This 177-nucleotide RNA was probed chemically with 2A3 and DMS.
[RMDB]
RNA sequence: GGGAACGACUCGAGUAGAGUCGAAAAUAAGGGCGGCUCGGCGGAGAAAAGCCUGCAACGCAGUCCGUUGGGGGCUCGCCAGGUGUGACUCCUGCAUUCGAGCCUCUGGUCCGUGCGGCUAAGGUGCGCAUGGUACCGGGUUCGCCCGGUGCCAUGUAAAAGAAACAACAACAACAAC
Reactivity to 2A3 in 0.01 (KOAc 150mM, MgCl2 10mM, bicine 150mM(pH8.5), 24C), signal-to-noise 3, nucleotides 027 to 126: u120a030a030g030g010g000c030g000g000c000u010c010g000g010c000g000g020a030g020a010a060a000a010g010c000c000u000g000c010a020a020c020g030c070a000g010u000c010c010g010u050u120g140g020g000g000g000c000u000c000g010c020c000a000g000g000u040g020u040g070a020c010u010c000c000u040g000c010a090u060u070c010g000a000g000c000c000u000c010u020g000g000u000c000c010g000u030g010c030g010g000c020u020a050a000g040g000u020g010c040
Reactivity to DMS in 0.01 (KOAc 150mM, MgCl2 10mM, bicine 150mM(pH8.5), 24C), signal-to-noise 8, nucleotides 027 to 126: u040a110a090g000g010g010c080g010g010c010u000c000g020g000c020g000g000a020g000a030a080a100a270g000c010c000u010g010c100a110a060c040g000c150a030g000u010c000c000g030u040u040g020g020g010g010g000c000u010c030g000c230c010a000g000g010u020g000u020g010a230c030u010c000c000u030g040c080a150u020u030c020g000a020g010c010c010u000c020u010g000g010u010c020c010g000u010g010c030g000g000c040u010a080a090g000g000u010g010c070
The RNA was probed in 150 mM KOAc, 10 mM MgCl2 and 150 mM bicine (pH 8.5) at 24 C. DMS adducts were read by reverse transcription with MarathonRT.